[RMDB]
RNA sequence: GGGAACGACUCGAGUAGAGUCGAAAAUCAGACGGUCCCGUCCCGAGGCGGCGAUCCGUCCGAAUGCGCGCCCCGCGAUGAUUCGCGGCGGUGCUCCGGUAGUUCGAGGAGCCCCGCCUGUGAUCGUAUCAUUGAUCAGGUUCGCCUGAUCAAUGAUAAAAGAAACAACAACAACAAC
Reactivity to 2A3 in 0.01 (KOAc 150mM, MgCl2 10mM, bicine 150mM(pH8.5), 24C), signal-to-noise 7, nucleotides 027 to 126: u050c010a000g000a010c010g000g010u010c010c010c000g010u040c050c040c090g190a300g040g000c020g000g030c100g050a030u090c030c000g000u000c000c010g060a060a040u180g010c040g000c000g030c000c000c010c010g030c010g030a080u140g010a030u110u110c000g000c000g010g000c010g000g000u000g000c000u000c000c010g050g100u200a150g120u140u240c120g080a100g010g000a000g010c000c030c000c000g000c000c020u030g010u020g000a010u010c020g010u010
Reactivity to DMS in 0.01 (KOAc 150mM, MgCl2 10mM, bicine 150mM(pH8.5), 24C), signal-to-noise 3, nucleotides 027 to 126: u020c020a020g010a010c010g000g000u010c010c000c000g020u000c010c150c210g010a100g010g010c020g030g040c210g010a040u020c000c000g000u000c000c040g000a040a160u030g010c040g000c070g000c040c000c030c110g000c050g000a080u010g020a050u020u010c030g020c040g040g000c040g010g000u000g000c000u000c010c000g000g020u030a140g000u050u050c190g020a200g010g000a030g010c010c050c010c010g000c020c020u000g100u010g000a020u000c030g000u020
This 177-nucleotide RNA was probed chemically with 2A3 and DMS. Conditions: 150 mM KOAc, 10 mM MgCl2 and 150 mM bicine (pH 8.5), 24 C. DMS adducts were read by reverse transcription with MarathonRT. The data come from the RNA Mapping Database (RMDB), libraries RFM100 and RFMREP.